About this RNA
Structure probing data (2A3) for a 207-nucleotide construct. The reactions ran in a buffer of 150 mM KOAc, 10 mM MgCl2 and 150 mM bicine (pH 8.5), at 24 C.
RNA sequence: GGGAACGACUCGAGUAGAGUCGAAAAGGGGUCAUGCACGCCGUGGCUCGAACUACCACAAUGAUGGGCUGAAGCCUCCACGGCCUUGAGUGGCGAGCCGGGGUGCAUGACGGAGGCACCCAAAAUCUUUGUUCGUUCUUCGGAACGAACAAAGAAACGAUGAAUUACCCUUCGGGGUAAUUCAUCGAAAAGAAACAACAACAACAAC
Reactivity to 2A3 in 0.01 (KOAc 150mM, MgCl2 10mM, bicine 150mM(pH8.5), 24C), signal-to-noise 1, nucleotides 027 to 156: g000g000g060g030u020c030a000u010g000c000a010c040g300c110c040g250u280g030g000c000u000c010g030a110a070c110u240a160c210c010a070c030a070a300u140g000a050u160g000g010g000c000u020g010a090a000g020c020c000u000c010c000a000c040g010g000c000c000u070u100g040a040g000u000g010g040c030g000a000g000c030c010g000g000g000g000u010g000c000a000u000g000a000c000g000g010a000g000g000c020a050c010c000c050a000a080a020a050u050c010u000u010u000g000u010u000c010g000u000u000c000u030u050c160g060g000a000a000c000g000a000a000c010a000a000a010g000a040a030a000